[RMDB]
RNA sequence: GGGAACGACUCGAGUAGAGUCGAAAAUAAGCCCGGAUAGCUCAGUCGGUAGAGCAUCAGCCUUUUAAGCUGAGGGUCGAGCGUUCGAGUCGCUCAUCGGGCGCCAAAUAAAGCUAACGUGGGCAAACACGAUCAGUCCUUUCGAGGACUGAUCGUGAAAAGAAACAACAACAACAAC
Reactivity to 2A3 in 0.01 (KOAc 150mM, MgCl2 10mM, bicine 150mM(pH8.5), 24C), signal-to-noise 1, nucleotides 027 to 126: u190a090a060g000c000c020c000g000g010a090u030a000g000c000u040c000a020g070u110c040g000g190u130a030g050a000g010c000a050u000c010a000g010c040c040u240u300u110u300a040a030g010c000u000g000a050g000g000g010u010c100g000a010g040c000g010u000u000c000g000a000g060u060c030g000c000u000c000a000u010c000g000g030g000c000g000c000c000a030a000a010u300a060a100a000g000c030u010a080a050c070g030u000g010g010g020c000a010a010a010
Reactivity to DMS in 0.01 (KOAc 150mM, MgCl2 10mM, bicine 150mM(pH8.5), 24C), signal-to-noise 1, nucleotides 027 to 126: u000a210a300g060c000c060c030g010g060a040u000a030g010c000u000c100a120g000u000c110g000g020u040a010g000a050g000c000a090u000c000a000g000c020c130u030u050u010u010a020a300g040c000u030g050a040g040g000g040u040c020g000a030g000c040g000u000u000c000g010a300g000u000c040g150c040u000c010a030u040c020g040g000g000c000g030c060c060a080a150a150u000a000a030a130g000c110u010a050a040c190g030u010g010g020g010c110a060a010a200

Record summary:
An RNA of 177 nucleotides, treated with 2A3 and DMS and read out base by base. DMS adducts were read by reverse transcription with MarathonRT. It was measured as part of the RMDB library OK1LIB. For 2A3, 733 sequencing reads were counted. 2A3 adducts were read by reverse transcription with SuperScript II with manganese.